[RMDB]
The record gives the reactivity of an RNA of 177 nucleotides to 2A3. Reactivities are rounded to 0.1 and cut off at 0 and 3. The 2A3 profile rests on 567 reads. The reactions ran in a buffer of 150 mM KOAc, 10 mM MgCl2 and 150 mM bicine (pH 8.5), at 24 C.
RNA sequence: GGGAACGACUCGAGUAGAGUCGAAAAGUAGUGCUUUAUGGCGCAGUGACGUACAAUCCCUUUCCACAACAUUGAAGAACAAGCAUGUCCUCGGCCAUUAGGCUGUUGUGGGCAGCGUCCUGUAUAUCUGCGGACAGCAGUUCGCUGCUGUCCGCAGAAAAGAAACAACAACAACAAC
Reactivity to 2A3 in 0.01 (KOAc 150mM, MgCl2 10mM, bicine 150mM(pH8.5), 24C), signal-to-noise 1, nucleotides 027 to 126: g120u130a020g000u000g060c000u130u220u260a080u250g100g000c000g000c010a030g050u050g160a000c000g000u050a000c000a010a110u150c000c000c000u000u020u000c000c070a000c000a000a000c000a030u020u120g070a100a020g000a000a000c030a040a010g100c070a140u110g000u040c000c000u050c000g000g090c000c000a140u180u210a090g030g000c130u000g000u070u100g000u050g000g000g030c000a000g000c000g000u000c000c000u030g100u060a050u000a000u130